RNA sequence: GGGAACGACUCGAGUAGAGUCGAAAACGCAGUACGCGCUGGCCGCGCGACGCAGUACUAGGUACGUACGAGAUGUCGUACCAUCGGCCGAUCGCGCCGUACGUACGUACGUACAUCGUACACGGCGUGUACCCGAAACCUUCGGGUUUCGGGUACAAAAAGAAACAACAACAACAAC
Reactivity to DMS in 0.01 (KOAc 150mM, MgCl2 10mM, bicine 150mM(pH8.5), 24C), signal-to-noise 3, nucleotides 027 to 126: c080g050c070a070g030u000a100c040g000c030g000c070u010g020g010c080c040g020c080g000c020g000a090c040g030c020a140g010u030a040c110u000a110g010g000u010a010c020g010u010a010c010g010a160g000a170u000g010u000c030g000u000a030c010c020a070u010c080g030g020c020c010g000a090u040c120g020c030g010c030c030g010u000a060c160g030u000a010c030g020u000a060c130g000u010a070c170a060u010c040g000u000a030c010a080c030g020g000c000g000
Reactivity to 2A3 in 0.01 (KOAc 150mM, MgCl2 10mM, bicine 150mM(pH8.5), 24C), signal-to-noise 2, nucleotides 027 to 126: c040g000c060a040g050u120a060c020g000c000g030c020u030g020g030c020c030g000c010g000c010g050a000c030g000c020a020g060u060a090c060u100a070g040g030u020a010c030g020u080a010c020g040a060g070a300u300g090u110c000g020u010a040c000c010a090u080c020g010g000c020c010g020a170u150c040g010c000g000c000c000g020u050a060c090g000u000a010c030g020u000a020c020g010u070a060c040a120u120c030g010u000a010c020a010c030g020g020c010g010